[RMDB]
RNA sequence: GGGAACGACUCGAGUAGAGUCGAAAACAGCAGCCGCGGGCGGAGCUGCCGGGCCAGCCUGAGAUGAAGACGCAGCUGGAGCAGGACAGCAUCAUCGAGGCCCUGCUGCCGCUGAGCAUGGAGGCCAGAUAUGAUCUCACUUCGGUGAGAUCAUAUCAAAAGAAACAACAACAACAAC
Reactivity to 2A3 in 0.01 (KOAc 150mM, MgCl2 10mM, bicine 150mM(pH8.5), 24C), signal-to-noise 2, nucleotides 027 to 126: c010a010g010c010a010g030c010c020g040c060g050g010g050c030g020g040a050g000c040u030g010c010c010g050g050g000c020c000a010g020c000c060u100g030a110g010a120u240g090a120a050g110a020c080g010c090a010g000c000u040g020g020a040g060c040a060g000g040a060c040a030g020c010a080u070c010a050u100c090g090a100g120g000c000c000c020u060g010c000u030g030c000c000g000c010u050g010a030g000c030a040u070g010g060a030g000g080c010c010a010
Reactivity to DMS in 0.01 (KOAc 150mM, MgCl2 10mM, bicine 150mM(pH8.5), 24C), signal-to-noise 3, nucleotides 027 to 126: c060a060g000c040a070g030c020c110g010c060g000g000g010c020g020g010a130g020c050u000g010c020c010g000g030g000c030c020a040g000c090c070u010g000a140g010a090u000g050a080a090g010a170c120g010c060a070g010c000u010g000g000a070g020c010a090g000g000a090c010a020g030c010a100u000c160a090u020c200g010a160g010g000c000c000c010u000g010c000u000g000c010c060g020c010u000g000a120g010c080a100u000g010g000a130g000g010c040c080a140